The record gives the reactivity of an RNA of 207 nucleotides to 2A3. It was measured as part of the RMDB library RNAMAK. For 2A3, 969 sequencing reads were counted.

RNA sequence: GGGAACGACUCGAGUAGAGUCGAAAAUGCACUUUCGAGUGCAAAAAAUCCUAAGUCACCGGAACCGUAGCGAGGGGGAGGGUUCGGAAACGAACCCAUCGAUCCUACCCACCGCUACUCAGUACGGUGAUAUGGAAAAAAUGGCCUUCGGGCCAAAUGGACUUAGUCUAUUCGUAGACUAAGUCCAAAAAGAAACAACAACAACAAC
Reactivity to 2A3 in 0.01 (KOAc 150mM, MgCl2 10mM, bicine 150mM(pH8.5), 24C), signal-to-noise 1, nucleotides 027 to 156: u020g000c010a000c010u080u090u080c150g040a010g000u000g030c020a020a020a020a020a010a020u050c010c000u040a200a000g010u010c000a000c000c000g000g000a000a000c000c000g000u000a010g030c010g010a020g000g010g000g000g020a030g020g020g070u000u000c000g000g060a040a060a000c000g020a010a000c000c000c000a010u050c050g060a090u080c010c040u070a300c030c000c030a100c060c000g040c000u000a000c000u000c020a000g020u000a000c000g000g000u000g000a000u040a000u020g000g050a020a040a020a000a000a130u220g000g000c000c000u110u070c260g070g000g060c020c080a020a010a080